An RNA of 177 nucleotides, treated with 2A3 and read out base by base. Values cover nucleotides 27 to 126. As a SHAPE reagent, 2A3 marks flexible, mostly unpaired nucleotides at the ribose 2'-OH. It was measured as part of the RMDB library OK1LIB.
RNA sequence: GGGAACGACUCGAGUAGAGUCGAAAAAUAAUAAAAAUAGAUGAUAUUCCUAAUUUUCGACCGAUACUUUGCAUGGUUGGACUUCAAUUAGAUCAUGUAAUUUACUUCCUUAAUAUCAAUAGCAUUAAGCAUAUCAUGACUUCGGUCAUGAUAUGCUAAAAGAAACAACAACAACAAC
Reactivity to 2A3 in 0.01 (KOAc 150mM, MgCl2 10mM, bicine 150mM(pH8.5), 24C), signal-to-noise 1, nucleotides 027 to 126: a000u200a060a030u260a130a000a000a000a000u200a090g160a090u090g020a000u130a090u270u020c020c000u090a070a040u100u040u070u020c060g070a060c040c000g000a090u000a100c110u090u060u040g000c050a020u000g030g010u000u020g060g050a090c080u110u110c130a060a000u160u000a220g000a000u000c000a000u010g100u110a020a010u040u040u040a050c000u090u160c020c000u010u140a140a120u140a110u180c050a150a060u070a060g030c000a050u150u010a080